The record gives the reactivity of an RNA of 207 nucleotides to DMS and 2A3. For 2A3 the reverse transcriptase was SuperScript II with manganese.

[RMDB]
RNA sequence: GGGAACGACUCGAGUAGAGUCGAAAAGGCCAGUGAGGGCCAUAGUUCGUUGGUAAUUAAGUGUUAACAUUGUUACACUCCUUUUUAUGGUUACUGGUGACCUGAUUUCCAGAACAAUUUGUUCACUCCAGAUUAUGAUGAUGGCUUUUCAAUGAAGGUCAUUACUCAGUUUCGACUGAGUAAUGACAAAAGAAACAACAACAACAAC
Reactivity to DMS in 0.01 (KOAc 150mM, MgCl2 10mM, bicine 150mM(pH8.5), 24C), signal-to-noise 2, nucleotides 027 to 156: g030g010c050c030a110g020u000g000a120g040g000g030c020c000a000u000a050g020u000u010c070g020u000u000g000g030u000a050a100u000u000a070a120g010u000g020u000u000a060a100c050a190u010u010g020u000u010a030c020a090c050u000c030c040u020u000u010u020u000a130u010g020g000u000u000a170c020u000g020g020u010g010a030c010c030u010g040a170u000u000u000c060c030a240g010a050a040c040a050a190u000u000u010g000u010u010c020a140c060u000c000c010a130g010a170u000u000a030u000g010a090u000g020a130u000g010g010c020u000u000u020u010c060a090a070u000g020a090a120g040
Reactivity to 2A3 in 0.01 (KOAc 150mM, MgCl2 10mM, bicine 150mM(pH8.5), 24C), signal-to-noise 3, nucleotides 027 to 156: g020g000c010c030a040g030u020g140a090g000g040g060c000c020a000u010a000g070u030u030c070g020u030u070g050g010u040a140a090u140u070a150a140g040u030g070u120u100a030a070c120a210u100u230g020u050u040a040c030a010c000u110c000c030u070u170u030u020u090a130u170g060g000u000u060a020c030u050g000g030u020g010a020c000c000u030g050a120u120u030u010c020c030a020g010a030a000c030a090a080u060u040u200g030u050u050c040a020c030u000c030c030a010g000a090u010u130a040u200g000a000u010g010a000u000g010g000c000u050u060u010u070c080a090a070u090g110a030a010g040
Source information: DMS adducts were read by reverse transcription with MarathonRT. The DMS profile rests on 3,349 reads. The 2A3 profile rests on 1,459 reads. The reactions ran in a buffer of 150 mM KOAc, 10 mM MgCl2 and 150 mM bicine (pH 8.5), at 24 C.